[RMDB]
This 177-nucleotide RNA was probed chemically with DMS and 2A3.
The reactions ran in a buffer of 150 mM KOAc, 10 mM MgCl2 and 150 mM bicine (pH 8.5), at 24 C.
Reactivities are given for positions 27 through 126.
For DMS the reverse transcriptase was MarathonRT.
RNA sequence: GGGAACGACUCGAGUAGAGUCGAAAAGGAUGCUCGUUCGCGAGCAUCCACUGAGAUAGCCACUAUAAAGAUUAACUCUUCCUACUCGAGACAGGAUGUCUAUGCUCCUGGCCUUCGGGCCAGGAAACUUGCGCAAUAUUUUCGAAUAUUGCGCAAGAAAAGAAACAACAACAACAAC
Reactivity to DMS in 0.01 (KOAc 150mM, MgCl2 10mM, bicine 150mM(pH8.5), 24C), signal-to-noise 1, nucleotides 027 to 126: g000g000a000u000g020c010u000c000g030u000u020c120g030c000g010a000g000c000a000u020c000c000a030c090u010g000a130g010a100u000a120g010c080c110a070c120u000a160u000a050a160a070g020a100u010u000a070a150c140u000c000u000u010c030c000u000a080c000u000c030g030a050g020a160c030a080g020g010a060u000g030u000c050u010a100u010g000c110u030c000c020u010g050g010c000c000u000u010c160g030g020g000c000c000a000g000g000a020a030a070
Reactivity to 2A3 in 0.01 (KOAc 150mM, MgCl2 10mM, bicine 150mM(pH8.5), 24C), signal-to-noise 2, nucleotides 027 to 126: g010g030a010u000g010c000u000c010g020u050u050c230g030c010g090a010g020c000a000u000c000c010a020c020u040g020a010g020a020u060a040g060c090c070a060c040u100a090u070a260a250a010g030a040u030u150a060a050c030u000c020u020u020c010c000u010a020c000u000c020g030a030g020a070c020a020g140g020a080u100g030u120c030u080a150u130g080c000u050c000c000u000g000g000c010c000u010u030c190g090g000g010c010c000a000g010g000a000a000a030